[RMDB]
RNA sequence: GGGAACGACUCGAGUAGAGUCGAAAAACGGUCGUACGCGACCGAGGCGCGGUUAGGUCGACGGACCGAACAAUGGCAUCCCGCAUUCUGCCAUCCGCCGCGCAGCUUCUUCUCAAACGGUGCGGAAAAAAGUAGGACACCUUCGGGUGUCCUACAACAUAUAACAACUCUUCGGAGUUGUUAUAUGAAAAGAAACAACAACAACAAC
Reactivity to DMS in 0.01 (KOAc 150mM, MgCl2 10mM, bicine 150mM(pH8.5), 24C), signal-to-noise 2, nucleotides 027 to 156: a070c020g060g000u010c010g040u000a120c160g030c010g050a030c000c000g020a020g010g020c010g000c000g030g000u000u000a210g030g020u000c000g030a160c300g020g010a030c010c000g010a080a050c090a130a030u010g000g010c010a100u000c040c010c030g020c040a030u000u000c080u020g020c010c000a060u010c030c020g000c000c010g000c010g030c020a060g000c040u010u010c050u000u010c040u000c020a130a090a070c060g010g020u010g040c010g020g000a010a060a060a070a100a150g000u000a000g010g000a040c000a010c000c010u000u010c300g050g040g020u000g010u000c000c000u000a000c000a010a120
Reactivity to 2A3 in 0.01 (KOAc 150mM, MgCl2 10mM, bicine 150mM(pH8.5), 24C), signal-to-noise 3, nucleotides 027 to 156: a000c020g000g000u000c010g000u050a040c240g010c030g120a000c000c010g000a060g020g000c000g000c010g000g030u020u160a010g000g010u010c020g080a160c200g140g020a000c000c000g000a010a000c010a010a010u010g000g000c000a020u070c030c020c000g000c000a020u300u080c020u040g000c010c000a010u020c010c010g000c010c000g000c010g000c000a020g000c010u130u090c010u100u010c020u030c020a080a100a060c030g000g000u010g000c000g000g000a030a010a000a070a060a000g010u000a000g000g000a000c000a000c010c010u040u100c210g050g010g000u010g000u000c000c000u000a000c000a000a000